[RMDB]
RNA sequence: GGGAACGACUCGAGUAGAGUCGAAAACACACGUUCGCGUGUGCUUGUGGGGUCAAAGGCGCGAAGCGCAACGACAUGCUGAAGCCUCCACGGCAACAGCGUUGCGAACUACUUCGCCCCUUUGACGGAGGCACCCGAUAUUCGUCUUCGGACGAAAGAAUCGGGAAACGUUCGCGUUUCCCGAUUCAAAAGAAACAACAACAACAAC
Reactivity to 2A3 in 0.01 (KOAc 150mM, MgCl2 10mM, bicine 150mM(pH8.5), 24C), signal-to-noise 1, nucleotides 027 to 156: c000a010c000a000c000g050u070u080c150g030c000g060u060g020u020g030c000u140u010g050u220g300g300g000g000u020c000a000a000a010g010g000c020g010c000g020a000a000g000c000g030c010a000a000c000g110a080c060a170u300g060c000u020g010a060a010g000c000c000u000c030c020a130c080g000g000c010a110a090c050a160g260c030g000u010u000g010c010g030a030a040c040u090a050c020u130u010c000g060c070c000c010c000u000u000u000g000a000c000g000g010a010g020g060c020a000c000c000c000g010a000u030a110u120u050c000g010u010c020u000u050c210g030g010a000c000g130a240a080a010